[RMDB]
RNA sequence: GGGAACGACUCGAGUAGAGUCGAAAAGUCGACAACUCUGAGGAGAAAAGGGAGGAUCGGCUGGGAAGAGUAUAUCCUAUGGGAAUCCCUGGUUUCCCCUUAUGUCCAGCCCCUCCCCGGUCCGAGACCUGAUUUAUACGUUCGCGUAUAAAUCAGGAAAAGAAACAACAACAACAAC
Reactivity to DMS in 0.01 (KOAc 150mM, MgCl2 10mM, bicine 150mM(pH8.5), 24C), signal-to-noise 1, nucleotides 027 to 126: g030u000c010g010a000c020a190a060c010u000c000u020g000a010g030g000a140g020a070a040a120a120g000g000g000a040g020g010a080u000c130g000g000c010u020g000g000g000a080a120g000a040g010u000a080u000a070u010c090c070u000a070u000g010g000g020a090a050u000c040c050c110u030g020g000u000u000u000c010c000c020c130u020u000a040u020g010u000c000c020a030g000c020c000c000c000u000c010c010c020c000g010g010u000c020c000g000a110g010a160